[RMDB]
RNA sequence: GGGAACGACUCGAGUAGAGUCGAAAAGGCUUCUACAAUUGUAUGGGAGCGGUUGGUUCCUGAGAAGAGCGUCGGGGAAGAGAUUGUGCCAUCAAGAACGUACGUGCGUCUCAUACUAUGGACACCACCCUACUAAAUCGUUCGCGAUUUAGUAGGGAAAAGAAACAACAACAACAAC
Reactivity to DMS in 0.01 (KOAc 150mM, MgCl2 10mM, bicine 150mM(pH8.5), 24C), signal-to-noise 5, nucleotides 027 to 126: g010g010c040u010u010c000u020a050c060a120a070u040u030g010u030a100u020g000g000g010a050g010c030g010g020u010u010g000g020u000u000c010c000u000g020a110g020a100a080g010a120g000c020g000u000c030g010g000g020g020a090a130g000a070g000a060u010u020g030u000g000c020c040a090u010c050a060a100g000a080a070c080g010u020a080c120g000u030g010c020g000u020c030u000c050a050u020a050c090u010a060u000g000g000a080c070a090c070c100a160
Reactivity to 2A3 in 0.01 (KOAc 150mM, MgCl2 10mM, bicine 150mM(pH8.5), 24C), signal-to-noise 9, nucleotides 027 to 126: g040g000c040u060u020c020u070a130c050a210a220u210u140g040u060a050u100g030g010g000a010g040c030g040g010u060u090g130g020u010u050c000c010u030g030a060g020a130a030g040a020g030c030g050u030c020g010g040g030g000a070a040g050a010g000a040u050u130g040u080g050c010c000a030u060c030a070a050g030a080a030c030g050u150a020c040g070u140g070c030g170u020c000u000c030a020u040a070c030u070a060u160g050g020a010c010a020c050c010a050
Record summary
An RNA of 177 nucleotides, treated with DMS and 2A3 and read out base by base. The reactions ran in a buffer of 150 mM KOAc, 10 mM MgCl2 and 150 mM bicine (pH 8.5), at 24 C. For DMS the reverse transcriptase was MarathonRT. For 2A3 the reverse transcriptase was SuperScript II with manganese. Values cover nucleotides 27 to 126.